The record gives the reactivity of an RNA of 170 nucleotides to DMS and 2A3. Source: RMDB library 15KLIB, as collected in RNAgym. Conditions: 150 mM KOAc, 10 mM MgCl2 and 150 mM bicine (pH 8.5), 24 C. For 2A3 the reverse transcriptase was SuperScript II with manganese.

RNA sequence: GGGAACGACUCGAGUAGAGUCGAAAAGUUCGGUGAACCCUCCCGGGUGUUUCCUCUUCCUAGGUCCGGAGUCGACCUCCAUCUGAUCCGUCCUGGCUCUCUUCGCCGGGGGAGCUCCCUCCCCGUCCACCUCGUUUGUUCGCAAACGAGAAAAGAAACAACAACAACAAC
Reactivity to DMS in 0.01 (KOAc 150mM, MgCl2 10mM, bicine 150mM(pH8.5), 24C), signal-to-noise 6, nucleotides 027 to 129: g020u040u060c090g000g000u020g040a080a100c050c000c040u020c000c000c050g000g000g000u030g020u000u000u000c030c000u000c050u000u000c040c050u000a090g000g000u030c000c060g000g050a070g000u020c040g000a120c040c000u030c050c040a000u000c080u040g010a080u020c050c060g000u030c000c010u000g020g030c050u000c050u000c070u000u020c060g030c050c040g050g000g000g000g020a040g030c010u000c030c020c010u020c000c010c010c030g000u030c050c040a110c150
Reactivity to 2A3 in 0.01 (KOAc 150mM, MgCl2 10mM, bicine 150mM(pH8.5), 24C), signal-to-noise 9, nucleotides 027 to 129: g040u060u070c050g020g040u090g060a070a060c010c000c000u040c000c010c010g020g000g010u080g040u000u050u030c010c000u030c010u040u030c010c020u040a050g010g040u040c050c030g030g020a030g050u050c020g030a100c010c010u010c020c010a090u060c060u070g040a070u020c020c010g070u040c030c030u020g010g000c000u010c000u000c020u150u130c040g020c040c000g010g000g000g010g000a020g010c010u070c010c000c000u020c000c000c000c000g030u040c020c020a090c010